[RMDB]
RNA sequence: GGGAACGACUCGAGUAGAGUCGAAAAUGCCGUAACAGCUGUCAGAGCGGGUGAUGAUGCACUUUCCCGCCGAUGAUGACCUUGGGGCAAUUAUCGCUAUUCGUACUAGGCUGACGUAGGUUGCGAAUGGACGAGUACUCUUCGGAGUACUCGUCCAAAAAGAAACAACAACAACAAC
Reactivity to DMS in 0.01 (KOAc 150mM, MgCl2 10mM, bicine 150mM(pH8.5), 24C), signal-to-noise 1, nucleotides 027 to 126: u010g000c090c000g060u000a070a030c170a150g000c030u000g030u000c000a040g010a140g040c000g000g000g040u010g010a090u000g000a210u000g050c130a060c230u000u010u020c000c000c000g010c020c000g000a090u000g000a050u000g000a120c040c080u000u000g000g050g000g020c220a020a080u000u000a030u000c020g000c010u000a060u000u000c300g020u010a140c300u000a020g000g020c050u000g000a090c020g050u000a050g000g000u000u000g020c020g010a090a110